[RMDB]
Structure probing data (2A3 and DMS) for a 177-nucleotide construct.
RNA sequence: GGGAACGACUCGAGUAGAGUCGAAAAGAUAUGGACGAAGAGCGAUAAGAUAUAUGUCGGAAACGACAUUUAUCUUUUGACGCUUUAGUCCUAAGUCAAAAGCGCAUUCAGUUCGCUGAAUGCGCAACCUACAUGAAAUCUUCGGAUUUCAUGUAGGAAAAGAAACAACAACAACAAC
Reactivity to 2A3 in 0.01 (KOAc 150mM, MgCl2 10mM, bicine 150mM(pH8.5), 24C), signal-to-noise 5, nucleotides 027 to 126: g000a000u030a020u070g010g000a010c010g020a030a030g010a010g040c030g050a070u110a300a120g000a000u000a030u000a000u000g000u010c000g000g010a030a030a000c010g000a000c000a000u000u010u000a000u000c010u040u130u050u140g120a020c010g010c000u290u160u030a000g000u000c000c000u010a030a010g010u010c010a000a030a090a100g000c010g010c010a000u000u000c010a000g070u020u160c280g040c170u000g010a010a000u000g010c000g000c000a000a000
Reactivity to DMS in 0.01 (KOAc 150mM, MgCl2 10mM, bicine 150mM(pH8.5), 24C), signal-to-noise 5, nucleotides 027 to 126: g010a020u000a200u010g000g010a010c000g000a200a130g000a010g020c000g030a160u010a050a040g010a010u000a000u000a010u010g010u000c000g000g000a040a030a090c000g010a010c000a010u000u000u000a000u000c000u000u000u010u000g010a160c050g000c010u000u000u000a300g000u000c000c000u000a020a090g010u000c020a060a080a080a120g000c000g000c000a010u000u000c010a010g000u000u010c300g030c000u000g000a010a010u000g010c000g020c000a010a010
2A3 adducts were read by reverse transcription with SuperScript II with manganese.
For DMS the reverse transcriptase was MarathonRT.
The 2A3 profile rests on 18,670 reads.